[RMDB]
RNA sequence: GGGAACGACUCGAGUAGAGUCGAAAAGAGUCCUAUUUCGAUAGGACUCAACUAAAAUCAGCGGUAAAUAAUUAGCUGGCGAUACCGCUGAACGCCAGCAUACUAGCCUCGUCUUCGGACGAGGCAAGGGAAGCAUAAUAUUCGUAUUAUGCUUCCCAAAAGAAACAACAACAACAAC
Reactivity to 2A3 in 0.01 (KOAc 150mM, MgCl2 10mM, bicine 150mM(pH8.5), 24C), signal-to-noise 9, nucleotides 027 to 126: g000a000g000u000c000c000u010a020u010u070u050c170g080a010u010a010g000g040a000c000u000c000a000a000c000u070a020a020a030a120u030c010a000g020c000g160g190u200a060a090a110u130a070a150u160u130a060g010c000u000g000g000c010g010a020u050a130c000c010g000c000u010g000a010a000c010g000c000c000a000g010c010a010u090a080c100u110a050g000c000c000u000c000g010u000c010u010u050c220g080g000a000c000g000a000g000g000c000a000a000
Reactivity to DMS in 0.01 (KOAc 150mM, MgCl2 10mM, bicine 150mM(pH8.5), 24C), signal-to-noise 4, nucleotides 027 to 126: g010a010g000u000c000c000u000a010u000u010u010c160g030a020u000a010g000g000a030c000u000c000a030a070c070u000a050a060a110a130u010c000a000g000c010g010g010u010a050a030a050u010a030a050u000u000a090g000c000u000g000g010c010g020a110u000a060c030c000g000c000u000g010a030a120c070g020c010c000a010g010c010a160u010a090c170u000a100g000c000c000u000c000g020u000c000u000u000c180g000g010a010c000g010a010g010g000c010a000a000
Description: Chemical mapping of a 177-nucleotide RNA with 2A3 and DMS. The reactions ran in a buffer of 150 mM KOAc, 10 mM MgCl2 and 150 mM bicine (pH 8.5), at 24 C. For 2A3, 24,485 sequencing reads were counted. For DMS, 7,201 sequencing reads were counted. In probing experiments dimethyl sulfate is read out at A N1 and C N3, which are open when not base-paired. For 2A3 the reverse transcriptase was SuperScript II with manganese.